Chemical mapping of a 177-nucleotide RNA with DMS and 2A3. For DMS, 5,482 sequencing reads were counted. It was measured as part of the RMDB library OK2TST.

RNA sequence: GGGAACGACUCGAGUAGAGUCGAAAACUUGCGACGUCGUGUGCAGUCAGACAUUAAAAGAUUGAUCUCUAUUCACGCUUAUCGUGGGCAAAGACAUCGUCUUUCAUUGCCUGUAAGAGGACAGAGAGGUACUGUAAAACUUCGGUUUUACAGUACCAAAAGAAACAACAACAACAAC
Reactivity to DMS in 0.01 (KOAc 150mM, MgCl2 10mM, bicine 150mM(pH8.5), 24C), signal-to-noise 5, nucleotides 027 to 126: c020u000u010g000c060g010a120c080g000u000c060g030u010g020u000g020c030a100g000u000c020a040g000a030c020a020u000u010a030a040a020a030g000a040u010u010g010a050u000c120u000c020u000a100u000u010c030a010c030g010c280u000u010a080u020c070g030u010g000g000g010c120a040a040a020g010a050c090a040u000c070g000u000c010u000u000u010c060a040u000u000g010c020c010u000g010u010a060a110g020a090g010g010a080c050a100g000a140g000a180
Reactivity to 2A3 in 0.01 (KOAc 150mM, MgCl2 10mM, bicine 150mM(pH8.5), 24C), signal-to-noise 5, nucleotides 027 to 126: c010u060u110g010c040g040a070c020g070u090c030g060u060g040u050g150c020a040g040u030c010a010g010a050c020a050u090u140a050a030a020a010g050a030u140u260g050a060u060c000u010c000u020a060u040u040c000a010c050g060c080u160u200a100u300c030g010u030g000g020g000c060a170a150a010g010a020c020a070u040c050g030u010c000u030u050u040c030a070u030u080g000c010c010u000g010u040a070a040g040a040g130g040a020c030a030g070a010g020a020